[RMDB]
RNA sequence: GGGAACGACUCGAGUAGAGUCGAAAAAGGGCAGGGUGAAAUUCCCGAUCGGCGGUAAAGUCUGCGAGCCGAACGAAAAAGGUUUGGCAGGAACCGGUGAGAUUCCGGUACCGACAGUAUAGUCUGGAUGACCACUUCAGCUUCGGCUGAAGUGGAACCAGUAAUGGUACUUCGGUACCAUUACUGGAAAAGAAACAACAACAACAAC
Reactivity to 2A3 in 0.01 (KOAc 150mM, MgCl2 10mM, bicine 150mM(pH8.5), 24C), signal-to-noise 1, nucleotides 027 to 156: a000g070g010g000c090a070g020g020g000u010g030a030a010a010u030u010c000c010c000g000a010u020c000g020g000c000g000g000u010a000a000a000g000u010c020u020g010c010g000a010g020c020c000g000a010a000c020g100a040a070a080a060a040g100g020u010u010u020g020g000c010a020g030g000a020a010c000c000g000g000u010g000a020g000a000u010u000c000c000g020g000u000a000c000c000g010a000c000a010g000u020a010u020a040g010u000c010u000g030g030a050u100g060a010c010c000a010c000u000u000c000a010g010c000u040u090c190g140g000c020u010g000a000a000g000u000g000g000a010a030
Reactivity to DMS in 0.01 (KOAc 150mM, MgCl2 10mM, bicine 150mM(pH8.5), 24C), signal-to-noise 2, nucleotides 027 to 156: a140g030g030g040c040a150g030g040g030u030g030a120a260a280u000u000c020c000c020g000a010u000c030g050g000c030g080g020u000a140a160a040g000u010c000u010g020c010g030a300g000c040c010g020a040a300c040g010a050a070a120a110a180g020g000u000u020u010g010g080c000a090g000g000a060a030c010c020g020g060u010g000a190g000a300u000u000c020c010g010g000u010a010c030c010g020a050c050a020g010u000a180u000a080g010u000c010u000g020g000a160u020g000a170c000c000a010c000u010u000c000a010g000c000u000u010c300g060g000c000u000g010a020a000g010u000g000g010a000a010